[RMDB]
RNA sequence: GGGAACGACUCGAGUAGAGUCGAAAAUUAUCGUGGAUCGCGCCAUCGCCGACGCCGACUCAGAAAUCGACCUGCAUCUGCACGGCCGAUACCAGUUGCCGCUCGCCAGCGUGCCAACGGCGCUCAAGCGCAUUGCCUGUGGCCUGGCCUACGCCAACUUACAUGACCACUUCGGUGGUCAUGUAAGAAAAGAAACAACAACAACAAC
Reactivity to 2A3 in 0.01 (KOAc 150mM, MgCl2 10mM, bicine 150mM(pH8.5), 24C), signal-to-noise 2, nucleotides 027 to 156: u300u060a180u100c050g000u070g110g000a060u100c110g040c020g000c050c000a020u070c020g000c030c030g060a090c030g000c030c040g000a020c050u030c050a010g150a120a140a130u120c060g070a080c000c010u000g010c010a100u050c060u160g000c030a080c150g020g000c020c050g000a000u020a130c010c010a000g000u020u030g000c020c000g030c020u060c080g020c000c000a040g030c030g060u110g070c030c010a080a030c000g020g000c020g010c020u050c110a130a050g010c030g050c080a050u030u210g000c000c000u070g040u070g000g010c030c050u030g000g000c010c040u030a050c040g020c000c000a020a100